Background:
Source: RMDB library OK3TST, as collected in RNAgym. An RNA of 207 nucleotides, treated with DMS and 2A3 and read out base by base. 2A3 adducts were read by reverse transcription with SuperScript II with manganese.
[RMDB]
RNA sequence: GGGAACGACUCGAGUAGAGUCGAAAAAGACAACCUUUUUACAACUGUUUUUACAAGAAUGUUGUGAUUUAUGUGAUUUGGAGUUAGAUUAUCAAUUUUCAACAAAUCCACUUAUUUACAUUGAAGAAGGUAAGUAUUUUGAUGCAUUGAAGAAAUGAAAUAUACCCUGGUUCGCCAGGGUAUAUUUAAAAGAAACAACAACAACAAC
Reactivity to DMS in 0.01 (KOAc 150mM, MgCl2 10mM, bicine 150mM(pH8.5), 24C), signal-to-noise 2, nucleotides 027 to 156: a070g000a200c050a090a110c020c030u000u010u010u010u010a130c040a040a070c020u020g030u010u000u000u000u030a150c080a100a150g000a100a100u020g020u000u010g010u000g010a120u010u000u000a030u010g020u020g020a060u010u000u000g020g020a170g020u000u000a120g020a120u000u000a080u000c070a100a190u000u000u000u000c040a020a060c010a000a080a030u000c040c030a030c050u000u000a030u000u000u000a030c020a090u000u000g010a120a130g010a070a070g010g000u010a010a080g000u000a040u000u000u010u000g020a090u000g000c140a080u000u000g010a060a050g020a070a040a140u040g010
Reactivity to 2A3 in 0.01 (KOAc 150mM, MgCl2 10mM, bicine 150mM(pH8.5), 24C), signal-to-noise 1, nucleotides 027 to 156: a000g050a050c040a050a000c060c000u040u020u010u040u080a050c010a020a000c020u050g090u080u050u000u050u050a020c040a050a120g130a120a020u070g040u010u000g000u010g030a050u000u130u080a100u140g060u030g080a080u010u000u020g030g000a080g010u080u000a110g040a180u000u150a080u150c030a060a000u000u000u190u120c010a030a020c000a000a040a050u040c080c020a000c010u060u010a020u110u070u020a010c000a040u010u160g020a090a060g060a000a010g000g000u000a000a030g040u010a060u080u130u060u060g050a030u230g000c130a080u010u000g000a000a060g000a090a060a000u170g010
Reactivities are given for positions 27 through 156. The 2A3 profile rests on 515 reads. The reactions ran in a buffer of 150 mM KOAc, 10 mM MgCl2 and 150 mM bicine (pH 8.5), at 24 C.